[RMDB]
RNA sequence: GGGAACGACUCGAGUAGAGUCGAAAACAAACACCAGCGAAAAGGAAGAAAAACCAAAACGUGAACUACUUGACCAAACACGAACGCUAGUGUAAAUCGGCAAGAAACAAAAACAAAACAAACAAAAGAGUAUACUAUUAUUCGUAAUAGUAUACUCAAAAGAAACAACAACAACAAC
Reactivity to DMS in 0.01 (KOAc 150mM, MgCl2 10mM, bicine 150mM(pH8.5), 24C), signal-to-noise 3, nucleotides 027 to 126: c070a070a240a110c100a010c040c060a020g020c050g010a070a020a080a160g010g060a020a060g040a060a060a040a110a100c010c050a050a050a020a100c070g070u010g000a020a100c070u020a020c050u010u000g010a050c020c010a110a180a040c080a070c030g000a090a030c070g020c000u000a000g030u000g020u000a010a040a100u050c180g010g000c020a000a040g000a170a030a130c230a050a060a000a020a030c130a040a030a070a090c180a020a060a200c190a110a050a170a130
Reactivity to 2A3 in 0.01 (KOAc 150mM, MgCl2 10mM, bicine 150mM(pH8.5), 24C), signal-to-noise 8, nucleotides 027 to 126: c010a000a120a000c030a050c040c010a000g020c010g040a080a070a080a040g070g060a080a110g080a080a130a070a020a010c050c010a030a080a020a040c030g020u020g050a050a010c020u140a060c020u100u080g090a170c020c010a050a060a020c010a000c020g040a130a010c040g030c100u040a050g000u010g010u060a090a110a050u100c040g030g000c020a030a010g060a060a080a010c090a070a090a040a010a000c060a030a080a020a010c060a050a110a010c030a030a130a020a010
The record gives the reactivity of an RNA of 177 nucleotides to DMS and 2A3.
Values cover nucleotides 27 to 126.
The DMS profile rests on 3,055 reads.
For 2A3 the reverse transcriptase was SuperScript II with manganese.
For 2A3, 11,534 sequencing reads were counted.